[RMDB]
RNA sequence: GGGAACGACUCGAGUAGAGUCGAAAAGGUUUGUGUGCGUUUUGGCAUUGAGCCGCCAGCAUAGCCAGAAAGCAACGUGAUCACAUCAUCGUAAAUCUCAACUCGUUUAGCUGCGAAUGUGAUGGCCUCAAACUCAUCAUCAUUCUGUAUUGCAAGCCCCAUAGAGAAAGUUCGCUUUCUCUAUGGGAAAAGAAACAACAACAACAAC
Reactivity to DMS in 0.01 (KOAc 150mM, MgCl2 10mM, bicine 150mM(pH8.5), 24C), signal-to-noise 3, nucleotides 027 to 156: g020g040u000u010u010g010u010g050u000g000c000g000u000u000u010u000g020g000c030a300u000u000g000a110g040c000c080g010c080c050a120g060c080a100u000a300g010c040c010a060g000a020a030a030g040c040a070a060c050g000u000g000a070u000c110a110c040a300u000c020a080u010c060g000u000a030a030a020u010c020u010c040a080a070c090u000c070g020u000u010u000a080g020c050u010g010c020g010a060a080u010g020u000g000a050u000g000g020c090c040u000c200a060a060a070c050u010c030a040u000c030a050u000c040a030u010u000c020u000g010u000a080u010u000g000c030a060a130g000c090
Reactivity to 2A3 in 0.01 (KOAc 150mM, MgCl2 10mM, bicine 150mM(pH8.5), 24C), signal-to-noise 7, nucleotides 027 to 156: g050g000u020u050u030g030u020g010u020g030c040g010u010u020u070u080g020g020c030a040u020u090g020a020g050c030c050g030c030c010a010g000c030a060u080a040g020c020c020a040g080a060a080a000g040c030a020a040c050g030u060g050a060u110c020a010c010a070u070c010a040u050c040g080u110a030a120a240u050c040u000c060a030a120c040u040c100g090u050u050u130a040g010c020u040g020c010g020a010a010u010g010u000g000a010u010g020g000c000c040u150c090a080a070a050c050u050c040a030u010c000a030u020c010a010u040u020c050u140g080u080a130u060u210g020c020a030a030g020c020